RNA sequence: GGGAACGACUCGAGUAGAGUCGAAAAACACCUCCGGACUACGGUCCGGAGGUGAGGCCUGUGAUGCAUCAAUUUGUCCGUACCAUCUGAGAUUUCUCUGAUCGAUACUCCAUUUUCUGAAUCUGAACAAUCACAACUGAUUCGUCAGUUGUGAUUGAAAAGAAACAACAACAACAAC
Reactivity to 2A3 in 0.01 (KOAc 150mM, MgCl2 10mM, bicine 150mM(pH8.5), 24C), signal-to-noise 6, nucleotides 027 to 126: a000c020a000c000c000u000c000c000g020g010a000c020u040a040c250g080g000u000c000c000g000g000a000g000g000u010g000a000g000g020c000c010u050g050u090g040a070u070g010c020a030u020c040a100a170u070u070u130g020u010c020c030g020u040a050c010c030a050u080c030u090g030a040g050a210u040u180u020c060u010c010u040g070a090u070c040g020a030u050a080c020u010c010c050a080u040u040u060u070c060u090g060a060a080u030c020u030g020a060a020
Reactivity to DMS in 0.01 (KOAc 150mM, MgCl2 10mM, bicine 150mM(pH8.5), 24C), signal-to-noise 3, nucleotides 027 to 126: a170c010a010c000c000u010c010c000g000g000a020c000u000a090c220g040g010u010c000c010g040g010a010g030g030u000g010a030g000g030c020c010u000g030u000g020a090u000g000c030a050u010c040a060a080u010u000u020g000u010c030c040g020u010a060c060c030a050u010c040u000g000a070g000a140u010u020u010c040u000c030u020g010a060u010c050g000a090u000a070c040u010c020c050a060u000u010u000u000c070u000g020a070a080u000c040u000g020a120a250
Conditions: 150 mM KOAc, 10 mM MgCl2 and 150 mM bicine (pH 8.5), 24 C. Structure probing data (2A3 and DMS) for a 177-nucleotide construct. For 2A3 the reverse transcriptase was SuperScript II with manganese. Values cover nucleotides 27 to 126. DMS adducts were read by reverse transcription with MarathonRT. Source: RMDB libraries RFM100 and RFMREP, as collected in RNAgym.